Structure probing data (2A3 and DMS) for a 177-nucleotide construct. For DMS the reverse transcriptase was MarathonRT. For 2A3, 1,096 sequencing reads were counted. The DMS profile rests on 2,508 reads. For 2A3 the reverse transcriptase was SuperScript II with manganese.
[RMDB]
RNA sequence: GGGAACGACUCGAGUAGAGUCGAAAACGCGAAAGAUCACUUAUUGUACCUUAGCUGUGAACGGCUAUUUUUCGGUAUGAAAGGGAUUUGGAACGGUUCGCUCAAGGCUGAAUUAAGACCUCUUGAGUCCUCAAUACUCCUUCGGGAGUAUUGAGGAAAAAGAAACAACAACAACAAC
Reactivity to 2A3 in 0.01 (KOAc 150mM, MgCl2 10mM, bicine 150mM(pH8.5), 24C), signal-to-noise 1, nucleotides 027 to 126: c030g030c010g040a050a020a000g030a000u000c000a000c090u000u080a120u210u250g010u010a040c000c000u020u030a020g020c030u050g080u100g300a300a120c120g030g020c000u000a050u060u150u020u070u230c050g000g010u030a000u000g040a000a000a000g000g000g000a020u060u040u030g010g000a030a000c010g080g000u020u010c030g000c020u050c030a010a030g070g000c050u110g010a110a030u060u080a140a020g040a130c010c000u000c010u010u030g020a030g040
Reactivity to DMS in 0.01 (KOAc 150mM, MgCl2 10mM, bicine 150mM(pH8.5), 24C), signal-to-noise 3, nucleotides 027 to 126: c030g010c020g000a300a170a030g020a010u000c010a020c020u000u000a170u010u000g000u000a010c000c020u000u000a020g010c010u000g020u010g010a120a200c180g010g010c010u000a030u010u000u010u010u020c240g000g020u000a020u000g000a000a030a000g020g010g010a010u000u000u000g010g010a140a020c030g000g000u000u000c080g020c010u000c030a040a050g000g020c040u000g010a110a070u010u020a080a170g010a090c050c020u010c020u000u000g000a040g010